[RMDB]
RNA sequence: GGGAACGACUCGAGUAGAGUCGAAAAGAUAUGGACCCGAUAAGUACUAAGCACAACAGCUCGGAAACGAGACAUGUGCGAAGUACUUUUGACGGGUCCUAAGUCAAAAGCAGGGUUCGCCCUGCAAGUAUAAUCCCAGGUUCGCCUGGGAUUAUACAAAAGAAACAACAACAACAAC
Reactivity to 2A3 in 0.01 (KOAc 150mM, MgCl2 10mM, bicine 150mM(pH8.5), 24C), signal-to-noise 2, nucleotides 027 to 126: g030a000u060a030u170g000g000a010c000c000c010g020a070u030a070a000g000u010a010c000u010a000a050g040c020a010c000a040a120c050a130g050c010u010c010g020g020a070a070a040c020g010a000g030a040c040a100u100g010u000g000c020g000a020a000g000u000a000c000u020u020u000u040g110a050c000g010g000g000u010c000c000u000a010a000g020u000c030a010a030a010a120g000c000a000g000g010g020u100u190c160g170c010c000c010u010g000c000a000a000
Reactivity to DMS in 0.01 (KOAc 150mM, MgCl2 10mM, bicine 150mM(pH8.5), 24C), signal-to-noise 4, nucleotides 027 to 126: g000a070u000a300u010g000g010a020c000c000c010g010a100u000a010a010g020u000a010c000u010a050a300g000c020a000c010a030a050c250a150g020c010u000c010g000g010a100a140a180c000g000a020g020a040c080a120u000g020u000g010c000g000a140a020g000u000a000c000u000u000u000u000g000a120c120g000g000g000u000c000c010u000a000a070g000u010c050a080a060a090a120g010c000a020g000g000g020u000u010c210g010c000c000c000u000g010c000a000a050

Description
Structure probing data (2A3 and DMS) for a 177-nucleotide construct. Values cover nucleotides 27 to 126. For DMS, 3,994 sequencing reads were counted. The reactions ran in a buffer of 150 mM KOAc, 10 mM MgCl2 and 150 mM bicine (pH 8.5), at 24 C. 2A3 is a SHAPE reagent: it acylates the 2'-hydroxyl of flexible nucleotides of all four kinds. Source: RMDB library TTRDEL, as collected in RNAgym.